RNA sequence: GGGAACGACUCGAGUAGAGUCGAAAAGGGGUUAGCGUUUGCAAAACGCUGUUAUUGCAAUGAUCUGGAUUUAGCGCAAGUAGGUCCGAAAACCAGAUCAACAUUUCGGACCUCCGCGCUAAUAAAAUAAUUUUGGACUAUUCGUAGUCCAAAAUUAAAAAGAAACAACAACAACAAC
Reactivity to 2A3 in 0.01 (KOAc 150mM, MgCl2 10mM, bicine 150mM(pH8.5), 24C), signal-to-noise 1, nucleotides 027 to 126: g010g000g000g020u110u090a000g020c000g000u000u020u190g100c040a120a040a000a040c030g050c060u010g060u060u050a110u030u110g040c040a070a090u130g020a070u120c010u080g150g040a100u000u040u010a000g000c000g000c030a110a000g030u080a000g140g010u000c000c000g020a000a030a040a090c180c050a080g010a220u130c050a000a020c010a000u030u020u000c000g000g000a010c000c000u010c000c010g060c010g010c030u010a020a000u040a000a110a020a050
Reactivity to DMS in 0.01 (KOAc 150mM, MgCl2 10mM, bicine 150mM(pH8.5), 24C), signal-to-noise 5, nucleotides 027 to 126: g000g000g010g020u010u010a040g020c010g020u000u000u000g020c220a060a030a040a020c020g020c030u000g020u010u000a060u010u010g000c080a070a060u000g010a130u010c040u010g010g010a200u000u000u000a010g020c000g000c010a060a110g020u010a010g010g010u000c000c000g000a000a010a030a100c170c190a100g010a100u010c150a080a050c150a140u000u000u000c000g000g000a010c000c000u000c070c120g010c000g010c000u000a000a010u000a050a050a090a110